The data come from the RNA Mapping Database (RMDB), library OK2TRN. This 177-nucleotide RNA was probed chemically with DMS and 2A3. For DMS, 1,555 sequencing reads were counted. High DMS reactivity at an A or C suggests that its Watson-Crick edge is free. DMS adducts were read by reverse transcription with MarathonRT. The 2A3 profile rests on 1,393 reads. Conditions: 150 mM KOAc, 10 mM MgCl2 and 150 mM bicine (pH 8.5), 24 C.
RNA sequence: GGGAACGACUCGAGUAGAGUCGAAAAAGUUCGAGAUUACAGCACCAGAUGCAAAAUCAUUGGCAUAUAAGUCCUCAACUUUUCAAGUAUGGUGGGACAAUCAAUUAACCCUGAAUAAUGUGAUCUCCUAGACAGACGAAUUCGUUCGUCUGUCUAGAAAAGAAACAACAACAACAAC
Reactivity to DMS in 0.01 (KOAc 150mM, MgCl2 10mM, bicine 150mM(pH8.5), 24C), signal-to-noise 2, nucleotides 027 to 126: a120g010u000u010c110g010a020g020a010u010u000a040c030a030g010c120a070c070c060a060g010a080u000g000c130a060a030a090a110u000c070a110u020u010g010g010c100a100u010a120u000a080a130g010u000c000c010u010c040a060a010c030u000u000u010u010c220a070a070g010u000a050u000g020g020u000g010g010g000a010c070a080a090u010c120a010a060u000u000a060a100c030c030c060u000g000a080a080u000a050a100u010g000u000g000a010u000c010u000c020
Reactivity to 2A3 in 0.01 (KOAc 150mM, MgCl2 10mM, bicine 150mM(pH8.5), 24C), signal-to-noise 2, nucleotides 027 to 126: a000g090u080u120c020g000a000g000a020u020u010a000c010a030g010c010a010c020c040a040g030a080u060g020c020a020a100a090a170u070c050a050u060u150g090g000c110a000u110a000u050a190a050g020u030c000c010u090c020a030a020c000u130u140u170u180c110a000a040g050u060a250u180g050g040u180g010g000g000a000c050a000a090u110c020a020a070u150u040a050a060c010c020c000u000g060a070a060u090a110a030u050g010u020g010a020u000c000u000c000